[RMDB]
RNA sequence: GGGAACGACUCGAGUAGAGUCGAAAAGAAAGAAAGAAAGAAAGGUAUGAAGUCCUAUUCACGCGGGAUAGGAUAAACUUCAUAUUGAUCGUGUAUGUGCUAACGCACAUACACGAAUGCGCAUGCAGAACUGCAUGCAUGAACAUACUGUGUGCAACUGGUAGUACGCAUUCGUGCGUACUACCAGAAAAGAAACAACAACAACAAC
Reactivity to 2A3 in 0.01 (KOAc 150mM, MgCl2 10mM, bicine 150mM(pH8.5), 24C), signal-to-noise 1, nucleotides 027 to 156: g080a000a040a060g000a080a030a000g050a040a070a000g090a090a130a030g000g000u010a020u000g000a000a000g000u000c000c000u000a000u000u010c120a040c250g120c180g070g000g000a000u000a000g000g000a000u070a030a030a010c010u000u000c020a000u000a000u000u080g120a090u050c000g010u000g000u000a000u000g020u000g020c070u120a100a030c080g020c010a000c000a000u000a000c000a000c000g000a000a000u030g000c020g000c000a000u000g000c000a020g130a280a080c120u070g000c000a000u000g000c010a000u080g060a040a010c020a010u120a130c050u010g050u040g020u040g130c000a030a010